[RMDB]
RNA sequence: GGGAACGACUCGAGUAGAGUCGAAAACUCAGCGCCUAAGAGUCAGUGGGAAACCAUUGGCUAGUGCUUGGGUUUCAUUACUCAAGUGCAACACUGAUCAAAUUGCGGGAAAGCCCUAAAGCUUUGCUAACCAAGCUAAGUGUGAAAGCACUCAGUGCGUCUUUACUACGUUCGCGUAGUAAAGACGAAAAGAAACAACAACAACAAC
Reactivity to 2A3 in 0.01 (KOAc 150mM, MgCl2 10mM, bicine 150mM(pH8.5), 24C), signal-to-noise 6, nucleotides 027 to 156: c040u030c040a030g030c050g040c040c060u190a210a030g080a010g150u010c010a000g000u000g000g000g020a060a050a060c010c000a000u000u010g000g000c000u000a010g000u010g020c000u010u020g000g000g020u020u050u100c130a140u230u190a020c010u020c010a020a010g000u010g010c020a050a020c010a020c030u010g010a030u030c030a040a060a170u150u140g030c050g000g050g000a080a080a060g080c020c010c000u110a100a080a010g000c010u050u040u090g010c030u060a090a100c030c040a080a010g000c020u030a020a010g000u010g000u020g060a080a040a020g000c010a010c020u040c020a020g030u040g040
Reactivity to DMS in 0.01 (KOAc 150mM, MgCl2 10mM, bicine 150mM(pH8.5), 24C), signal-to-noise 2, nucleotides 027 to 156: c040u010c000a050g000c000g020c020c070u020a120a200g020a070g050u000c000a000g040u000g030g000g000a210a120a260c000c000a030u000u000g010g010c000u000a020g000u000g000c010u000u030g000g020g020u000u000u000c300a130u000u000a010c010u000c010a030a020g050u000g030c040a090a070c010a020c010u000g010a050u000c080a050a120a090u020u000g000c040g000g010g000a080a090a020g020c030c020c060u000a130a090a150g030c000u000u000u000g000c030u000a110a180c050c080a040a090g010c020u000a020a020g020u010g000u000g000a220a110a270g020c010a010c000u000c020a020g040u000g000
This 207-nucleotide RNA was probed chemically with 2A3 and DMS. For 2A3, 5,162 sequencing reads were counted. For 2A3 the reverse transcriptase was SuperScript II with manganese.